[RMDB]
RNA sequence: GGGAACGACUCGAGUAGAGUCGAAAAAAACCAAAGAAGAAGGUGGACUUGAAGGCAGUGUUUUGUACAUUGAUACUGAAAACACUUUCAGACCUGAAAGAAUCGUAUCCAUUGCUCAAGCUCAUGAUGUACGAUCCUGAUUCGUCAGGAUCGUACAAAAAGAAACAACAACAACAAC
Reactivity to 2A3 in 0.01 (KOAc 150mM, MgCl2 10mM, bicine 150mM(pH8.5), 24C), signal-to-noise 1, nucleotides 027 to 126: a010a000a010c070c000a030a070a000g050a100a030g020a040a000g110g020u060g010g020a040c040u010u040g010a060a020g130g000c000a000g010u020g070u030u060u130u200g100u070a050c020a130u070u140g050a040u030a100c030u010g000a000a000a010a010c050a010c000u000u050u000c090a060g110a170c000c070u030g010a030a020a000g050a040a040u090c030g000u060a020u100c030c010a030u030u030g000c000u000c020a050a000g000c020u020c030a030u120g090a080
Reactivity to DMS in 0.01 (KOAc 150mM, MgCl2 10mM, bicine 150mM(pH8.5), 24C), signal-to-noise 2, nucleotides 027 to 126: a090a060a060c050c030a100a120a100g060a160a060g020a030a020g010g030u000g020g000a100c070u000u000g010a150a070g000g040c030a030g010u000g010u000u010u020u000g000u000a020c110a060u000u010g000a040u000a000c000u010g010a110a030a030a120c190a050c020u010u000u000c030a080g000a100c260c110u000g000a040a020a010g000a040a050u000c030g000u020a070u000c010c040a000u000u000g020c030u020c110a010a070g000c060u000c020a000u010g000a110